[RMDB]
RNA sequence: GGGAACGACUCGAGUAGAGUCGAAAAUUUUGAGAUGGAGUCUCACUGUAUCACCCAGGCUAGAGUGCAGUGGUAUGAUCUCGGCUCACUGCAACCUCUGCCUCUGGGUUCAAGCAAUUCUUAUGCCUUAGCCUCCUGUGUAGCUUGGAUUACAGGAGACUAAAUUAGGGUUCGCCCUAAUUUAGUCAAAAGAAACAACAACAACAAC
Reactivity to 2A3 in 0.01 (KOAc 150mM, MgCl2 10mM, bicine 150mM(pH8.5), 24C), signal-to-noise 5, nucleotides 027 to 156: u110u110u050u080g030a020g010a020u070g120g080a080g080u000c030u040c020a040c040u070g010u090a080u140c050a030c010c010c010a030g010g000c050u140a010g000a010g010u110g030c010a000g010u020g030g070u160a110u170g130a120u080c100u030c100g060g020c060u060c040a010c010u020g000c010a040a120c020c020u020c010u020g010c010c030u030c040u030g010g000g000u020u040c020a020a000g000c010a030a090u110u060c040u100u120a090u170g030c010c010u040u050a020g020c010c000u010c010c020u020g000u010g020u040a040g020c040u070u060g040g020a030u060u040a040c010a020g030g020a030
Reactivity to DMS in 0.01 (KOAc 150mM, MgCl2 10mM, bicine 150mM(pH8.5), 24C), signal-to-noise 2, nucleotides 027 to 156: u010u000u000u000g000a070g020a090u000g020g010a120g020u000c010u000c030a060c050u000g020u000a050u010c090a080c020c010c010a040g010g000c030u000a040g010a080g030u010g000c050a010g020u000g000g020u000a030u020g000a040u000c110u000c120g020g000c010u010c000a020c020u000g000c000a050a060c120c010u000c020u010g010c030c000u000c000u010g010g000g020u010u000c060a050a130g000c060a050a110u000u000c060u000u000a100u000g010c010c010u000u010a070g010c040c010u000c010c000u020g000u000g020u000a030g000c060u000u000g010g020a200u000u000a040c010a030g030g000a160